[RMDB]
The record gives the reactivity of an RNA of 207 nucleotides to 2A3. Source: RMDB library M2RFPK, as collected in RNAgym. Values cover nucleotides 27 to 156.
RNA sequence: GGGAACGACUCGAGUAGAGUCGAAAACAGGAAACUGGUUAAUCGUUUUCCUUGGUAGUAUAGCGGAAACCAUAAAUAAAAAGAACUCUAAGUGCUUGAGUAGAGUUAAAAUAAUUAGACAGGCAAUUAAGGUACUCCACGUUCGCGUGGAGUACAACGUUGGUAACUCGUUCGCGAGUUACCAACGAAAAGAAACAACAACAACAAC
Reactivity to 2A3 in 0.01 (KOAc 150mM, MgCl2 10mM, bicine 150mM(pH8.5), 24C), signal-to-noise 1, nucleotides 027 to 156: c000a000g120g070a100a010a100c080u100g000g190u230u230a190a180u240c030g000u040u040u000u110c010c000u030u060g120g050u070a090g030u030a050u280a120g020c010g000g040a000a140a010c000c010a040u100a180a100a080u110a110a110a050a060a010g100a030a000c000u020c000u000a000a000g030u030g300c000u000u000g000a000g000u000a000g000a000g040u120u140a000a000a000a000u050a000a000u260u010a000g010a000c000a000g010g000c000a020a080u150u120a080a030g050g000u010a000c000u000c010c030a000c000g000u020u000c160g000c000g130u010g000g000a000g000u000a010c000a000a000